[RMDB]
Conditions: 150 mM KOAc, 10 mM MgCl2 and 150 mM bicine (pH 8.5), 24 C. Structure probing data (DMS and 2A3) for a 207-nucleotide construct. For 2A3 the reverse transcriptase was SuperScript II with manganese. Reactivities are given for positions 27 through 156.

RNA sequence: GGGAACGACUCGAGUAGAGUCGAAAAGAGGUCACGGGGCUGAGCGGCCACCACUGUGCAGGGGAGGUCACAGGGCUGAGCGGCUGACUCCAGAACAGGAAGGGAACACGCCAGGAGGGAGGAUUGCUCACUGAGUCAGGGCGGGACUCAGAGGGAACCUUUUACUGCUAUUCGUAGCAGUAAAAGGAAAAGAAACAACAACAACAAC
Reactivity to DMS in 0.01 (KOAc 150mM, MgCl2 10mM, bicine 150mM(pH8.5), 24C), signal-to-noise 1, nucleotides 027 to 156: g000a060g030g030u030c070a150c080g030g010g080g100c070u010g000a060g020c060g050g030c020c030a050c050c020a090c090u000g030u060g100c100a140g020g010g050g010a140g030g000u000c030a090c030a090g050g010g020c000u010g030a080g050c050g050g040c050u000g020a040c020u000c010c000a160g010a080a100c030a100g020g030a100a160g010g000g010a050a030c120a050c060g040c000c010a220g000g010a160g000g000g010a070g000g030a110u000u020g000c030u000c010a110c020u010g000a050g000u000c000a090g000g030g030c060g010g010g000a070c010u000c000a100g000a000g010g000g050a140a160
Reactivity to 2A3 in 0.01 (KOAc 150mM, MgCl2 10mM, bicine 150mM(pH8.5), 24C), signal-to-noise 4, nucleotides 027 to 156: g050a030g000g020u070c050a010c160g010g020g000g030c060u060g050a030g020c040g040g000c010c030a070c010c020a120c050u060g020u070g020c070a110g000g040g000g020a040g030g020u040c000a010c010a040g030g030g000c080u050g030a030g010c010g020g000c030u030g040a110c010u060c030c030a030g040a120a050c050a040g030g060a060a050g050g010g010a030a020c080a020c090g070c030c020a030g020g010a030g020g020g010a030g030g040a080u050u200g030c020u020c040a060c000u030g000a000g020u020c030a040g000g030g050c040g000g010g000a000c000u000c020a000g010a010g010g020g010a020a030